The record gives the reactivity of an RNA of 177 nucleotides to DMS and 2A3. The DMS profile rests on 23,194 reads. 2A3 adducts were read by reverse transcription with SuperScript II with manganese. The RNA was probed in 150 mM KOAc, 10 mM MgCl2 and 150 mM bicine (pH 8.5) at 24 C. Reactivities are rounded to 0.1 and cut off at 0 and 3.
[RMDB]
RNA sequence: GGGAACGACUCGAGUAGAGUCGAAAAGCGCAUUCACGACUAUCUGCGCGUGAUCGCGAUCAGGCGGGUGCGCGAACGGAUCGUGUCGCACGCGCGUGCGGCGGACGAGGCGCAUGCGCGCCGUCCACUCCCCUAUUUUAUUCGUAAAAUAGGGGAGAAAAGAAACAACAACAACAAC
Reactivity to DMS in 0.01 (KOAc 150mM, MgCl2 10mM, bicine 150mM(pH8.5), 24C), signal-to-noise 9, nucleotides 027 to 126: g010c010g020c180a060u000u000c030a070c020g010a070c040u000a100u010c140u010g020c120g010c020g010u000g000a060u000c030g010c000g000a100u010c140a100g010g010c020g010g000g020u000g010c000g010c000g010a080a110c070g000g000a070u000c040g010u010g030u010c020g010c020a060c010g010c300g010c190g020u000g010c020g020g000c030g000g010a030c050g000a060g010g000c000g010c030a050u000g010c080g010c000g020c020c020g010u000c010c030a300
Reactivity to 2A3 in 0.01 (KOAc 150mM, MgCl2 10mM, bicine 150mM(pH8.5), 24C), signal-to-noise 9, nucleotides 027 to 126: g020c000g010c020a030u090u080c050a040c110g050a040c060u120a120u280c090u300g050c050g000c010g120u030g020a070u110c050g000c020g030a080u120c120a020g050g000c020g020g030g030u040g020c020g010c030g020a060a010c030g030g040a140u060c040g030u060g070u130c020g000c060a020c030g180c060g020c020g030u030g000c010g030g010c020g010g030a030c030g030a050g090g020c020g000c020a010u170g110c100g010c010g000c020c010g000u010c000c000a040